[RMDB]
RNA sequence: GGGAACGACUCGAGUAGAGUCGAAAAGGGGUCAAGCACUCGACCUUGGAUUUAGUUGUCUUUUGACGUCCUGAAGCCUCCACGGGACGAUAAGACAACUUGUCAGGUCGAGGCUUGACGGAGGCACCCAAAACGUAUAUUCUUCGGAAUAUACGAAGAAACUUGCAGAGUUCGCUCUGCAAGUUUCAAAAGAAACAACAACAACAAC
Reactivity to 2A3 in 0.01 (KOAc 150mM, MgCl2 10mM, bicine 150mM(pH8.5), 24C), signal-to-noise 1, nucleotides 027 to 156: g120g010g040g000u070c070a020a010g000c060a180c300u000c000g000a000c000c040u080u140g180g000a090u290u160u110a010g010u010u000g010u000c040u000u090u070u260g180a080c010g000u010c000c020u050g070a090a030g050c000c030u050c070c000a030c000g000g000g010a000c000g010a020u050a010a020g000a000c000a000a000c000u000u010g040u020c020a030g000g000u000c000g010a000g000g020c000u000u000g000a000c020g010g010a000g010g000c000a030c000c040c000a060a070a000a000c000g000u000a000u000a000u000u000c000u040u040c240g080g000a000a000u000a000u000a010c010g000a030a020

The record gives the reactivity of an RNA of 207 nucleotides to 2A3.